Background
Chemical mapping of a 177-nucleotide RNA with DMS and 2A3. For 2A3, 15,129 sequencing reads were counted. The RNA was probed in 150 mM KOAc, 10 mM MgCl2 and 150 mM bicine (pH 8.5) at 24 C. For 2A3 the reverse transcriptase was SuperScript II with manganese.
RNA sequence: GGGAACGACUCGAGUAGAGUCGAAAAGAUAUGGAGUUAACGAGCAUUCUUUGAGCGUAUUCGGAAACGAAAGCUCAUUGAUGCGAUGAGUUAACUCCUAAGUCAAACCAUUCGUUCGCGAAUGGAAUCUAUGUUAAAACUUCGGUUUUAACAUAGAAAAAGAAACAACAACAACAAC
Reactivity to DMS in 0.01 (KOAc 150mM, MgCl2 10mM, bicine 150mM(pH8.5), 24C), signal-to-noise 7, nucleotides 027 to 126: g010a030u000a300u000g000g000a030g010u000u000a000a000c000g000a190g010c000a010u000u010c020u000u000u000g010a010g010c000g010u010a130u000u000c000g010g000a100a070a190c000g010a000a020a130g000c000u000c000a000u000u000g000a020u000g010c000g000a120u010g000a200g010u000u000a000a000c000u000c000c000u000a020a050g000u000c030a120a120a190c010c000a010u000u000c000g020u000u010c260g030c010g010a010a000u000g000g010a090a070
Reactivity to 2A3 in 0.01 (KOAc 150mM, MgCl2 10mM, bicine 150mM(pH8.5), 24C), signal-to-noise 6, nucleotides 027 to 126: g040a010u070a050u150g000g000a000g000u000u000a010a000c020g030a040g030c000a020u300u210c080u000u020u020g010a000g000c030g030u130a270u040u050c010g020g030a060a050a040c000g030a040a010a010g020c000u000c000a010u000u020g010a010u010g010c010g000a160u130g070a030g000u000u010a000a000c000u010c000c000u010a000a010g000u000c020a040a050a100c010c000a000u010u000c010g020u030u070c300g000c010g180a020a000u010g010g010a000a020